[RMDB]
RNA sequence: GGGAACGACUCGAGUAGAGUCGAAAAUCAGCAGGACGUUGGCGAUUGCAUAGGUGCCCGCAUAGCCCAGCGCCGGGAUGUUACUGCGAGCUGUAUCACUGAUGAUCUCCAUUGCCGGCGCGCAGGAGCCGGUACCUGAUUUCGAUCAGGUACCGGCAAAAGAAACAACAACAACAAC
Reactivity to DMS in 0.01 (KOAc 150mM, MgCl2 10mM, bicine 150mM(pH8.5), 24C), signal-to-noise 2, nucleotides 027 to 126: u000c040a060g030c090a090g060g000a090c070g020u010u010g010g020c060g000a110u000u000g000c070a080u000a080g000g000u010g000c050c080c000g040c050a060u010a200g010c040c020c050a130g010c040g030c000c000g010g000g010a050u000g000u020u030a120c150u000g000c070g000a050g000c080u010g010u000a050u000c060a150c110u000g000a040u000g000a130u000c030u010c030c050a030u000u000g010c060c010g000g000c000g030c030g020c130a040g000g000a140
Reactivity to 2A3 in 0.01 (KOAc 150mM, MgCl2 10mM, bicine 150mM(pH8.5), 24C), signal-to-noise 1, nucleotides 027 to 126: u030c000a040g010c000a020g030g070a040c040g060u130u140g000g000c070g080a200u110u080g000c040a050u050a100g130g010u050g070c010c020c000g000c040a070u090a060g020c050c060c000a040g000c040g000c030c010g000g010g000a010u030g020u140u170a100c050u050g070c040g030a040g070c010u040g050u210a040u060c040a040c100u100g040a100u030g020a040u040c010u000c000c000a000u040u040g230c020c000g000g000c020g000c020g000c060a030g020g080a050
This 177-nucleotide RNA was probed chemically with DMS and 2A3. 2A3 adducts were read by reverse transcription with SuperScript II with manganese. For 2A3, 871 sequencing reads were counted. The RNA was probed in 150 mM KOAc, 10 mM MgCl2 and 150 mM bicine (pH 8.5) at 24 C. It was measured as part of the RMDB library OK2TST.